[RMDB]
RNA sequence: GGGAACGACUCGAGUAGAGUCGAAAAGGGUAUGGACUCUUUAAUUGAGGCCUCUCUAACACAUAAAACAUUAAACCUUCGUAGAUUCAUGAGCCGAAUCGUAGGAUGCCCGGAAUUUCUGUUUCUGCAAACAUAGGUUGUUCGCAACCUAUGUUUGAAAAGAAACAACAACAACAAC
Reactivity to DMS in 0.01 (KOAc 150mM, MgCl2 10mM, bicine 150mM(pH8.5), 24C), signal-to-noise 1, nucleotides 027 to 126: g010g000g000u010a040u000g040g010a040c010u000c000u010u030u000a090a090u010u000g020a030g000g000c040c000u010c040u000c000u010a060a070c070a050c110a090u010a060a070a030a180c160a070u020u000a060a090a210c060c000u000u000c080g000u000a240g030a060u010u000c010a070u000g000a080g060c110c090g000a050a090u010c090g010u020a140g000g010a050u000g000c030c000c010g010g020a040a120u000u000u000c120u010g010u000u000u010c020u010g010
Reactivity to 2A3 in 0.01 (KOAc 150mM, MgCl2 10mM, bicine 150mM(pH8.5), 24C), signal-to-noise 2, nucleotides 027 to 126: g030g000g000u060a080u150g010g070a060c010u070c000u090u210u140a210a160u100u030g000a000g040g020c010c000u040c010u000c000u090a170a010c060a000c000a080u180a130a090a040a010c060a030u060u210a100a140a070c020c040u040u100c070g060u020a050g010a060u000u050c010a010u070g060a010g080c040c020g020a030a040u020c010g000u000a020g020g010a010u010g050c010c020c000g130g090a120a100u050u140u000c090u030g000u040u010u030c020u020g030